[RMDB]
RNA sequence: GGGAACGACUCGAGUAGAGUCGAAAAAGACGACGAUGAUUACGAUCAUCGUCGUCACAAGCGUUCUAUCUCCUUAAACAUUCAUCGUCUUGUACACGAUGGUUGUUUAAGGAGCUGAAACGCUAAAUUUUUGUGCUUUUUUCGAAAAGCACAAAAAAAAAGAAACAACAACAACAAC
Reactivity to DMS in 0.01 (KOAc 150mM, MgCl2 10mM, bicine 150mM(pH8.5), 24C), signal-to-noise 3, nucleotides 027 to 126: a080g000a000c000g010a020c000g010a020u000g000a030u010u010a150c190g020a070u010c000a000u000c000g000u000c000g000u000c000a010c140a080a020g010c010g000u000u010c030u000a050u000c010u000c000c000u000u000a010a000a010c010a010u000u000c020a000u000c000g010u010c040u030u060g010u020a200c300a000c000g000a000u000g010g010u010u000g010u000u000u000a000a000g010g000a010g010c090u010g000a030a000a010c010g020c000u000a010a070a100
Reactivity to 2A3 in 0.01 (KOAc 150mM, MgCl2 10mM, bicine 150mM(pH8.5), 24C), signal-to-noise 3, nucleotides 027 to 126: a000g010a000c020g000a010c010g010a000u020g020a010u000u060a080c250g090a030u000c010a000u000c000g010u000c000g000u000c000a000c010a000a000g000c000g000u010u010c030u090a080u050c010u000c000c000u010u010a000a000a000c000a010u050u070c000a000u040c000g030u020c020u120u250g080u220a030c060a000c060g000a000u000g000g000u000u000g000u000u000u000a000a000g000g000a000g000c010u000g000a000a000a000c000g010c000u000a020a090a070